[RMDB]
RNA sequence: GGGAACGACUCGAGUAGAGUCGAAAAGACCGCGGCGGUCGCUAUGCUGACUGAUUCCGCGGUGAGCAUCAGCGUGAUCGCGACCACAACGGAUAGAUAACGAACCACUCGACGCAUGGCGUCCACCGCAGUUGGAUGUAUUCGUACAUCCAACUGCAAAAGAAACAACAACAACAAC
Reactivity to DMS in 0.01 (KOAc 150mM, MgCl2 10mM, bicine 150mM(pH8.5), 24C), signal-to-noise 3, nucleotides 027 to 126: g000a050c010c000g020c160g030g030c060g020g000u000c010g010c010u000a070u010g010c050u020g020a070c120u020g000a240u000u000c030c020g040c250g000g020u000g010a070g000c040a090u000c040a100g000c120g030u000g020a080u000c060g000c020g000a060c050c010a030c090a040a070c090g010g000a090u000a100g000a110u000a100a150c100g000a080a090c070c050a140c060u000c040g020a160c190g030c040a050u010g010g000c020g030u000c000c030a040c110c030
Reactivity to 2A3 in 0.01 (KOAc 150mM, MgCl2 10mM, bicine 150mM(pH8.5), 24C), signal-to-noise 3, nucleotides 027 to 126: g050a030c010c000g000c020g000g010c010g000g020u050c020g000c020u100a100u200g030c020u120g040a080c020u020g020a220u220u040c030c020g020c050g050g000u020g000a020g000c010a050u080c060a020g090c010g140u140g080a140u130c050g010c020g070a090c020c030a060c030a070a040c010g040g000a030u060a130g070a050u100a130a070c040g020a030a030c040c000a060c100u080c050g030a030c040g020c080a090u070g080g010c000g010u000c000c010a070c030c080

Structure probing data (DMS and 2A3) for a 177-nucleotide construct. Conditions: 150 mM KOAc, 10 mM MgCl2 and 150 mM bicine (pH 8.5), 24 C. DMS (dimethyl sulfate) methylates the pairing face of unpaired adenines and cytosines. Reactivities are rounded to 0.1 and cut off at 0 and 3. Reactivities are given for positions 27 through 126. 2A3 adducts were read by reverse transcription with SuperScript II with manganese.